[RMDB]
RNA sequence: GGGAACGACUCGAGUAGAGUCGAAAAGCGUAAGGCGGCCACAGCAGAAGCCUUCACGUCGGAGCCGCUGUCAGAUUCUGGUGAAUCUGCGAUUUCUGCUGAAAUGAAGGCUGAAGAGACAGCCAAACGUACCUAUUAGUUUCGACUAAUAGGUACGAAAAGAAACAACAACAACAAC
Reactivity to 2A3 in 0.01 (KOAc 150mM, MgCl2 10mM, bicine 150mM(pH8.5), 24C), signal-to-noise 9, nucleotides 027 to 126: g040c040g070u090a040a020g020g000c000g010g020c040c040a140c010a030g010c000a000g010a030a000g010c010c000u070u070c110a070c090g150u130c060g070g040a030g030c010c010g010c070u070g060u080c000a000g000a010u020u000c010u270g240g040u300g090a000a000u000c000u010g000c000g000a000u030u110u000c000u000g000c000u010g030a040a050a060u210g030a090a030g000g000c000u000g000a100a050g050a020g020a080c000a010g000c000c000a050a060a010
Reactivity to DMS in 0.01 (KOAc 150mM, MgCl2 10mM, bicine 150mM(pH8.5), 24C), signal-to-noise 8, nucleotides 027 to 126: g000c040g010u020a040a030g000g010c030g000g010c080c210a130c050a030g000c030a040g010a050a210g010c020c010u000u000c090a050c100g020u020c050g000g000a120g010c050c020g000c120u010g000u050c010a000g000a020u000u000c000u040g030g010u060g000a020a000u010c000u000g000c040g010a080u030u020u000c010u020g000c010u010g010a110a140a080u040g000a110a090g000g010c000u010g000a110a110g010a300g000a140c050a030g020c010c020a060a070a170
Description:
An RNA of 177 nucleotides, treated with 2A3 and DMS and read out base by base. Conditions: 150 mM KOAc, 10 mM MgCl2 and 150 mM bicine (pH 8.5), 24 C. 2A3 adducts were read by reverse transcription with SuperScript II with manganese. Reactivities are rounded to 0.1 and cut off at 0 and 3.